[RMDB]
RNA sequence: GGGAACGACUCGAGUAGAGUCGAAAAGCGGUCGUACCAGGGGCAUGUGCAGAAGUGAUCUCAGGUGCAGAAGAAGCCGAGUUGUCUUUUAUCGGCGCAGUAGCUGACAUUCCUGAUACAGAUCGGCCGGACCAUAGACAUUCGUGUCUAUGGUCCGAAAAGAAACAACAACAACAAC
Reactivity to DMS in 0.01 (KOAc 150mM, MgCl2 10mM, bicine 150mM(pH8.5), 24C), signal-to-noise 1, nucleotides 027 to 126: g000c070g030g000u000c000g020u000a030c020c030a080g010g000g010g000c120a040u000g010u010g020c060a080g010a130a100g020u020g000a090u010c020u000c030a060g000g000u000g000c060a050g000a030a180g000a160a150g010c020c000g000a030g010u010u000g020u000c050u000u010u020u020a140u010c010g000g030c000g000c070a090g020u010a140g000c000u000g010a070c130a150u000u000c010c000u020g000a070u000a040c070a060g000a050u000c020g020g010c140
Reactivity to 2A3 in 0.01 (KOAc 150mM, MgCl2 10mM, bicine 150mM(pH8.5), 24C), signal-to-noise 1, nucleotides 027 to 126: g030c020g040g010u050c000g000u010a070c010c030a030g030g020g020g030c090a080u080g000u090g070c010a020g010a210a020g080u100g170a250u000c040u000c030a020g050g020u030g000c050a000g040a140a030g080a040a010g010c040c000g020a020g030u130u130g110u110c090u070u180u050u110a110u130c000g010g010c050g000c040a030g050u110a020g050c030u000g000a040c000a030u110u000c030c000u010g010a000u030a070c010a100g040a030u030c030g030g010c030